An RNA of 207 nucleotides, treated with DMS and 2A3 and read out base by base. For DMS the reverse transcriptase was MarathonRT. It was measured as part of the RMDB library M2RFPK. The DMS profile rests on 4,770 reads. The reactions ran in a buffer of 150 mM KOAc, 10 mM MgCl2 and 150 mM bicine (pH 8.5), at 24 C.
RNA sequence: GGGAACGACUCGAGUAGAGUCGAAAACGUUGUCAUCGACAACACCCUAUGCAUUCAUGCUCUGUAAGGAUGCGCCGAAAGGUGAGCAAGCCCGAGUUGCCCAGACCUGAAAUGCAACACUUGAGAGAAAACCCGAAGCAGUUCGCUGCUUCGGGAACAAAACAUUCUACUUCGGUAGAAUGUUUUGAAAAGAAACAACAACAACAAC
Reactivity to DMS in 0.01 (KOAc 150mM, MgCl2 10mM, bicine 150mM(pH8.5), 24C), signal-to-noise 3, nucleotides 027 to 156: c070g000u000u000g020u000c020a170u010c150g000a090c020a040a070c020a110c010c000c010u030a100u000g020c010a060u000u000c040a290u010g030c020u010c040u010g020u010a300a200g010g040a060u000g010c000g050c040c010g010a130a100a150g020g010u000g000a090g040c030a100a220g030c040c040c020g000a100g020u000u000g030c020c030c040a120g020a100c050c040u000g010a060a060a120u000g020c030a060a060c030a090c020u010u020g010a200g000a170g000a130a030a100a170c000c000c000g010a020a000g020c000a040g000u000u000c270g030c010u000g020c000u020u000c000g000g010g000a000a020
Reactivity to 2A3 in 0.01 (KOAc 150mM, MgCl2 10mM, bicine 150mM(pH8.5), 24C), signal-to-noise 3, nucleotides 027 to 156: c060g010u010u010g010u020c110a270u130c300g010a000c000a000a010c000a050c010c000c010u050a050u080g000c000a000u000u020c010a050u130g000c020u000c000u030g030u040a020a020g000g000a010u010g010c010g020c010c000g050a100a050a000g040g000u000g020a020g030c010a030a020g020c000c010c010g070a100g030u040u100g050c010c030c000a030g040a060c010c020u040g020a080a060a040u070g000c010a030a030c030a070c100u100u110g070a070g000a010g030a090a120a070a060c000c010c000g000a010a000g000c000a010g000u100u150c200g050c200u000g000c000u020u000c000g000g020g000a000a000